Background
Chemical mapping of a 207-nucleotide RNA with DMS. It was measured as part of the RMDB library PDB130. The DMS profile rests on 2,793 reads. DMS (dimethyl sulfate) methylates the pairing face of unpaired adenines and cytosines. The RNA was probed in 150 mM KOAc, 10 mM MgCl2 and 150 mM bicine (pH 8.5) at 24 C.

[RMDB]
RNA sequence: GGGAACGACUCGAGUAGAGUCGAAAAAAGGAUCGCUGAACCCGAAAGGGGCGGGGGACCCAGAAAUGGGGCGAAUCUCUUCCGAAAGGAAGAGUAGGGUUACUCCUUCGACCCGAGCCCGUCAGCUAACCUCGCAAGCGUCCGAAGGAGAAUCAAACAUAUGAUGCAGGUUCGCCUGCAUCAUAUGAAAAGAAACAACAACAACAAC
Reactivity to DMS in 0.01 (KOAc 150mM, MgCl2 10mM, bicine 150mM(pH8.5), 24C), signal-to-noise 2, nucleotides 027 to 156: a070a120g010g020a030u000c050g090c000u000g000a050a140c010c010c020g000a090a130a260g020g020g030g030c000g050g000g020g030g000a110c070c110c040a280g000a120a090a090u000g010g020g020g010c000g000a070a110u000c000u000c000u020u000c000c020g010a100a170a230g000g040a000a010g010a020g020u000a050g010g000g000u010u000a030c030u000c010c020u010u000c050g020a030c000c000c000g000a250g010c010c010c020g030u010c040a100g030c070u030a100a250c010c000u000c000g000c020a140a060g040c030g030u000c020c010g020a000a030g020g000a050g000a120a120u000c020a060a130a300